This 177-nucleotide RNA was probed chemically with 2A3 and DMS. Values are in units of 0.01, from 0 to 300, in steps of 10. Conditions: 150 mM KOAc, 10 mM MgCl2 and 150 mM bicine (pH 8.5), 24 C. The data come from the RNA Mapping Database (RMDB), library OK1LIB.
[RMDB]
RNA sequence: GGGAACGACUCGAGUAGAGUCGAAAACACAUUAAAAAACACAGAAUCCGCGGCACAGCCCGCGGCCCCGCGGGCGGCCAACCCGGCAAGCGCGCGCGAGUGGGCCAAAAAGCCUAGCAGGUCGGAGUCAUAGACAUGUAUUCGUACAUGUCUAUGAAAAAGAAACAACAACAACAAC
Reactivity to 2A3 in 0.01 (KOAc 150mM, MgCl2 10mM, bicine 150mM(pH8.5), 24C), signal-to-noise 3, nucleotides 027 to 126: c060a010c040a030u230u300a090a130a080a050a060a000c100a010c010a020g190a120a100u020c050c030g000c030g030g000c000a040c040a190g060c060c010c010g020c000g000g000c000c010c000c000g000c000g010g110g000c000g030g000c010c000a010a030c020c020c010g000g000c040a100a070g140c030g000c010g000c000g000c020g080a020g040u140g000g000g000c010c010a030a260a030a000a040g000c010c020u050a040g050c030a010g020g040u110c030g030g020a040g040
Reactivity to DMS in 0.01 (KOAc 150mM, MgCl2 10mM, bicine 150mM(pH8.5), 24C), signal-to-noise 3, nucleotides 027 to 126: c070a160c180a180u030u020a020a040a090a070a080a070c100a050c070a150g010a100a110u000c020c020g000c030g000g040c060a070c160a210g050c080c050c040g000c240g000g000c070c050c040c080g080c120g000g010g030c060g010g020c040c000a050a120c170c100c040g000g010c090a170a100g010c050g030c040g000c050g000c040g000a060g010u050g020g010g020c000c040a050a110a140a150a060g010c000c010u020a160g000c070a080g000g010u030c000g000g000a090g010